The data come from the RNA Mapping Database (RMDB), library VIROID.
This 177-nucleotide RNA was probed chemically with DMS.
The RNA was probed in 150 mM KOAc, 10 mM MgCl2 and 150 mM bicine (pH 8.5) at 24 C.
For DMS the reverse transcriptase was MarathonRT.
[RMDB]
RNA sequence: GGGAACGACUCGAGUAGAGUCGAAAACCUGCGAGACAGGAGUAAUCCUAAACAGGGUUUUCACCCUUCCUUUAGUUUCCUUCCUCUCCUGGAGAGGUCUUCUGCCCUAGCCCGGUCUUCGAAGCUUAACAGCAUUAAGGUUCGCCUUAAUGCUGUUAAAAGAAACAACAACAACAAC
Reactivity to DMS in 0.01 (KOAc 150mM, MgCl2 10mM, bicine 150mM(pH8.5), 24C), signal-to-noise 1, nucleotides 027 to 126: c030c000u000g010c100g020a050g000a200c170a010g020g020a030g020u000a110a060u000c110c020u000a040a090a040c120a090g020g000g010u010u000u000u010c030a180c000c000c000u000u000c060c000u000u020u020a050g030u010u010u000c020c030u000u010c020c030u000c020u000c000c070u000g010g020a110g030a090g010g010u000c030u010u000c040u000g000c030c000c030u000a090g010c030c030c030g020g030u000c040u000u000c050g010a170a110g000c150u000u010